Source: RMDB library OK3TST, as collected in RNAgym. Structure probing data (2A3 and DMS) for a 207-nucleotide construct. For DMS, 3,598 sequencing reads were counted. For 2A3, 2,335 sequencing reads were counted. The RNA was probed in 150 mM KOAc, 10 mM MgCl2 and 150 mM bicine (pH 8.5) at 24 C.
RNA sequence: GGGAACGACUCGAGUAGAGUCGAAAAAUCAUACUCCAAAUCAGAACCCCUGGGUCAGAUGUGCGAGUUCUUCGGGUCAACGACCGCCGUUGGGUGCCUGUAACGGACUGGGCUCGGAGAAGUCACCGUGAUUGGACAACCAGGACAUCUGUACCACAUUAAUAGCGUUGUUCGCAACGCUAUUAAUAAAAGAAACAACAACAACAAC
Reactivity to 2A3 in 0.01 (KOAc 150mM, MgCl2 10mM, bicine 150mM(pH8.5), 24C), signal-to-noise 4, nucleotides 027 to 156: a000u160c070a060u120a140c040u090c090c040a040a050a130u130c040a040g090a110a080c010c010c020c010u040g010g000g060u020c010a020g010a070u030g080u080g080c040g010a050g110u030u000c000u000u010c000g010g010g000u000c010a070a070c110g140a080c060c080g010c010c010g040u040u050g150g020g060u100g060c020c030u110g030u110a030a010c020g000g020a010c060u110g030g020g000c010u010c000g000g010a010g000a010a010g080u080c030a020c090c030g050u060g080a150u070u130g040g010a020c020a060a120c040c030a040g010g040a020c010a030u010c010u010g030u070a050c020c020a040c020
Reactivity to DMS in 0.01 (KOAc 150mM, MgCl2 10mM, bicine 150mM(pH8.5), 24C), signal-to-noise 2, nucleotides 027 to 156: a100u000c030a150u010a100c020u010c000c050a020a150a140u000c020a070g010a130a190c050c020c010c040u000g000g010g000u010c020a100g010a060u000g010u000g040c050g000a110g000u000u000c010u020u010c030g010g040g020u010c020a100a130c030g030a100c020c060g040c030c030g000u000u000g000g010g020u010g010c000c050u010g000u000a080a070c030g000g010a160c080u000g050g030g010c000u000c020g030g020a050g010a040a050g000u000c010a080c020c070g000u010g000a190u000u020g020g020a120c060a050a080c020c020a010g000g010a060c020a070u000c020u000g020u000a120c030c020a180c170